The record gives the reactivity of an RNA of 177 nucleotides to DMS and 2A3. Values cover nucleotides 27 to 126. For 2A3, 1,647 sequencing reads were counted. The reactions ran in a buffer of 150 mM KOAc, 10 mM MgCl2 and 150 mM bicine (pH 8.5), at 24 C.
[RMDB]
RNA sequence: GGGAACGACUCGAGUAGAGUCGAAAACGUUUUGCGAGAGCAGUUUGCCGAUGGAUUCACGAAUAGAAGGAUGCCAGCUCACGGCACGACUCACCGCGUCGUUGAGCGUCAGGCUACCGGGAGCGGCCGGUUUAUUUGCGUUCGCGCAAAUAAACCGAAAAGAAACAACAACAACAAC
Reactivity to DMS in 0.01 (KOAc 150mM, MgCl2 10mM, bicine 150mM(pH8.5), 24C), signal-to-noise 2, nucleotides 027 to 126: c050g000u010u020u000u000g000c010g000a110g000a180g020c000a040g020u000u000u000g020c010c000g040a140u000g000g020a130u000u040c060a090c060g020a170a060u030a090g070a200a140g000g000a100u030g000c040c010a300g000c000u010c010a010c000g010g010c020a050c050g000a050c140u010c170a090c200c020g010c090g030u010c040g020u010u050g020a000g000c010g020u010c200a120g020g000c030u000a110c030c010g000g000g060a100g000c010g000g000c040
Reactivity to 2A3 in 0.01 (KOAc 150mM, MgCl2 10mM, bicine 150mM(pH8.5), 24C), signal-to-noise 3, nucleotides 027 to 126: c000g000u050u000u110u220g020c020g030a060g000a010g030c030a020g000u060u100u140g020c030c030g030a060u090g080g020a020u080u060c060a070c140g070a110a120u130a280g060a120a010g020g000a000u100g020c000c000a000g010c010u000c000a020c000g000g050c010a000c040g130a130c020u110c130a050c040c020g020c000g000u010c020g000u000u100g010a000g010c050g090u100c080a000g030g020c000u010a040c010c020g000g010g010a070g020c040g000g000c010